[RMDB]
RNA sequence: GGGAACGACUCGAGUAGAGUCGAAAAGGGGUCAACGGGAGAUCACGAACGAUCUUUGAUCUAACUGAAGCCUCCACGGUUAGGGAGAUCCAACUGAUCAUCGAUCGUUGACGGAGGCACCCAAAGACCCGGAUUGUCUUCGGACAAUCCGGGUCAACUUAAAUAAGAUCUUCGGAUCUUAUUUAAGAAAAGAAACAACAACAACAAC
Reactivity to 2A3 in 0.01 (KOAc 150mM, MgCl2 10mM, bicine 150mM(pH8.5), 24C), signal-to-noise 3, nucleotides 027 to 156: g000g010g130g020u000c010a010a010c010g000g020g010a040g000a010u000c000a010c050g030a090a030c020g010a040u020c000u300u140u000g000a000u000c000u000a000a000c000u020g060a090a010g020c000c000u000c000c000a000c000g000g000u000u000a010g000g000g010a010g000a010u000c010c010a020a010c010u000g010a000u000c000a020u300c010g010a000u000c000g010u000u010g000a000c000g000g000a000g000g000c000a020c000c010c000a070a160a020g000a010c000c000c000g000g000a000u010u000g000u000c010u020u040c290g040g000a010c010a000a000u000c000c020g000g000g000u000c000a000a010
Reactivity to DMS in 0.01 (KOAc 150mM, MgCl2 10mM, bicine 150mM(pH8.5), 24C), signal-to-noise 1, nucleotides 027 to 156: g020g000g080g020u000c010a000a050c020g020g020g020a060g010a070u010c110a050c000g000a130a150c110g020a010u000c010u000u000u020g010a070u000c000u010a010a030c020u000g010a050a190g010c050c010u000c000c000a220c030g010g000u000u000a040g000g000g010a070g000a040u000c000c000a080a270c150u010g030a010u000c020a140u000c140g010a080u000c010g060u000u010g000a020c010g010g010a050g090g030c010a080c020c020c040a100a120a240g000a050c000c010c040g000g060a030u000u000g030u020c000u010u020c300g030g000a030c000a030a010u020c000c000g000g040g020u010c000a000a020